[RMDB]
RNA sequence: GGGAACGACUCGAGUAGAGUCGAAAAAUGAAAACGUACGGUACGUUAGCGAGUGCAAGUCUUUGAAUACACUCAACCUUGCGUUUUGCAAAGAUAUAACAGACGUCACAGCACUUUCUAAAAUUACAUUCGCUACUGUGUUCGCACAGUAGCGAAUAAAAGAAACAACAACAACAAC
Reactivity to 2A3 in 0.01 (KOAc 150mM, MgCl2 10mM, bicine 150mM(pH8.5), 24C), signal-to-noise 2, nucleotides 027 to 126: a000u060g000a020a000a060a000c000g010u060a020c010g000g040u030a000c100g160u180u070a090g120c080g050a000g000u000g000c020a100a000g070u050c030u000u200u190g060a070a000u070a050c070a010c020u010c000a000a010c000c000u000u050g050c010g000u210u000u000u000g010c000a000a170a000g050a060u060a010u030a110a060c060a070g050a050c060g050u030c030a030c060a090g050c020a000c000u070u050u020c030u060a180a080a040a040u090u210a050c040
Reactivity to DMS in 0.01 (KOAc 150mM, MgCl2 10mM, bicine 150mM(pH8.5), 24C), signal-to-noise 1, nucleotides 027 to 126: a160u000g000a070a080a010a070c240g000u050a010c080g000g040u000a050c300g000u000u000a070g040c120g000a000g000u000g250c030a040a100g000u000c000u070u000u000g000a000a090u000a210c050a010c160u000c060a180a000c070c120u000u000g000c000g010u000u010u000u000g000c050a130a000a040g050a120u000a090u040a000a140c000a040g100a000c080g020u000c030a080c130a070g100c090a000c030u000u000u000c000u060a030a080a090a050u040u040a040c090
Notes
Source: RMDB library OK1LIB, as collected in RNAgym. This 177-nucleotide RNA was probed chemically with 2A3 and DMS. For 2A3 the reverse transcriptase was SuperScript II with manganese.